[RMDB]
RNA sequence: GGGAACGACUCGAGUAGAGUCGAAAAGCGGUGUUGGCUGGACGACCGAGUGUCGGCGGAUACCUCCGGGCAGCUUGUCUGCUUGCAUGCUCCCAUGGGCUGGCUCCUGCUUGCAGUCCCAGCUUCCGGGUAUCGUUACCUUCGGGUAACGAUACCCAAAAGAAACAACAACAACAAC
Reactivity to 2A3 in 0.01 (KOAc 150mM, MgCl2 10mM, bicine 150mM(pH8.5), 24C), signal-to-noise 2, nucleotides 027 to 126: g000c000g000g010u040g020u060u080g070g000c010u030g040g060a020c030g040a010c040c000g150a160g030u240g040u020c010g020g060c010g020g000a020u070a110c000c010u110c010c010g000g070g020c020a020g000c000u080u180g090u140c010u030g050c020u000u130g060c000a060u080g010c030u020c040c000c000a030u240g030g000g020c000u010g020g010c010u000c010c020u010g040c020u050u010g000c000a000g070u110c000c000c010a020g030c000u080u010c080c110
An RNA of 177 nucleotides, treated with 2A3 and read out base by base. 2A3 adducts were read by reverse transcription with SuperScript II with manganese. The data come from the RNA Mapping Database (RMDB), library RFM100.